RNA sequence: GGGAACGACUCGAGUAGAGUCGAAAAGACUUCCUCCAGGAGGGUUCACAUCCCCAACCCGCGGGCCGGCUACUCUUCUUUCCCUUCUCUCGUCUUCCUCGGUCAACCUCCUGAGUUCCUCUUCUUCGCCCUAUAGUCUUCGGACUAUAGAAAAGAAACAACAACAACAAC
Reactivity to 2A3 in 0.01 (KOAc 150mM, MgCl2 10mM, bicine 150mM(pH8.5), 24C), signal-to-noise 9, nucleotides 027 to 129: g050a010c040u070u020c010c010u020c020c010a030g040g020a030g030g050g010u140u150c090a060c020a170u090c010c000c000c000a030a080c020c010c010g030c020g010g010g000c010c010g020g000c010u060a060c020u030c010u110u020c000u030u050u050c010c010c010u070u030c050u010c010u010c010g060u000c020u100u040c020c010u010c010g030g010u050c030a050a060c010c010u020c010c010u020g010a010g020u020u020c000c000u040c000u050u010c000u030u030c030g100c010c000
Reactivity to DMS in 0.01 (KOAc 150mM, MgCl2 10mM, bicine 150mM(pH8.5), 24C), signal-to-noise 9, nucleotides 027 to 129: g020a120c110u040u020c010c020u010c060c070a120g000g000a070g000g000g000u000u030c120a090c140a200u010c030c000c000c060a120a140c040c020c000g000c050g010g010g000c030c020g000g000c060u020a040c040u000c040u000u000c030u010u010u020c000c000c000u000u000c030u000c030u010c030g030u040c020u020u020c050c020u020c040g040g000u020c090a080a120c050c020u000c020c020u020g000a130g000u000u000c020c020u000c120u030u020c050u010u010c060g030c130c060